[RMDB]
The data come from the RNA Mapping Database (RMDB), library M2RFPK. Structure probing data (2A3 and DMS) for a 207-nucleotide construct. For 2A3, 2,118 sequencing reads were counted.

RNA sequence: GGGAACGACUCGAGUAGAGUCGAAAAAGUUCGCGCUUCCGUGAAACGCGAAAAUCGGACGGUGGCUGCAAGUCGUAUCGCAAAACCGCGGCAAGUGGAGUUAGCGAGAGGAGGCUGGGUUUUGGCUAGAACACACGGUACUUCGGUACCGUGUGAACCAUCCAAACAAGUUCGCUUGUUUGGAUGGAAAAGAAACAACAACAACAAC
Reactivity to 2A3 in 0.01 (KOAc 150mM, MgCl2 10mM, bicine 150mM(pH8.5), 24C), signal-to-noise 3, nucleotides 027 to 156: a000g070u040u050c020g000c010g000c090u060u040c100c050g110u080g100a090a070a010c050g000c010g040a050a010a010a040u130c050g030g020a020c030g010g030u030g030g010c040u040g030c050a060a040g010u030c030g030u060a050u070c000g000c030a000a070a000a020c040c030g010c020g040g070c150a140a030g030u060g070g020a050g020u050u080a030g020c030g010a030g000a020g060g040a030g020g020c020u040g000g000g060u050u060u120u050g040g010c030u070a030g050a170a000c010a000c000a000c010g000g000u000a000c000u020u060c190g070g000u000a000c010c000g000u000g000u000g000a000a000
Reactivity to DMS in 0.01 (KOAc 150mM, MgCl2 10mM, bicine 150mM(pH8.5), 24C), signal-to-noise 2, nucleotides 027 to 156: a110g040u000u000c010g000c000g030c020u000u000c040c210g010u000g020a030a040a040c020g040c020g020a030a010a080a130u000c090g040g000a110c060g030g010u010g030g040c030u010g000c030a090a100g040u010c070g000u000a100u010c040g000c040a090a050a110a130c070c010g020c040g010g000c110a090a120g000u000g050g000a080g000u020u000a230g010c000g000a130g010a160g000g020a070g020g020c080u000g020g020g000u000u000u000u000g010g050c080u000a080g000a080a240c000a030c010a000c000g030g020u000a000c000u000u020c300g030g000u000a000c000c000g000u030g010u000g000a040a090